[RMDB]
RNA sequence: GGGAACGACUCGAGUAGAGUCGAAAAGGAAAACCCGAGAGGGAGUGGAUGGCAAAGAAGCAUUGGAACGUCGGAGGGAAUUCUCCCAAGAAGGAAAAAAGAGAAGACAAGAGACGGACGAAACCCCCAUAGUGAAACAGUUCGCUGUUUCACUAUGAAAAGAAACAACAACAACAAC
Reactivity to DMS in 0.01 (KOAc 150mM, MgCl2 10mM, bicine 150mM(pH8.5), 24C), signal-to-noise 1, nucleotides 027 to 126: g000g040a200a110a150a180c020c020c020g000a130g010a040g010g000g000a070g020u020g000g010a050u000g010g000c040a040a110a030g000a070a090g010c090a090u030u000g050g020a050a100c120g040u000c130g010g010a100g000g000g000a090a060u010u000c060u000c040c050c090a070a130g010a040a010g010g010a000a040a090a010a060a090g010a060g020a030a050g000a110c040a080a110g000a060g000a010c080g000g000a060c090g000a060a080a110c030c010c000c110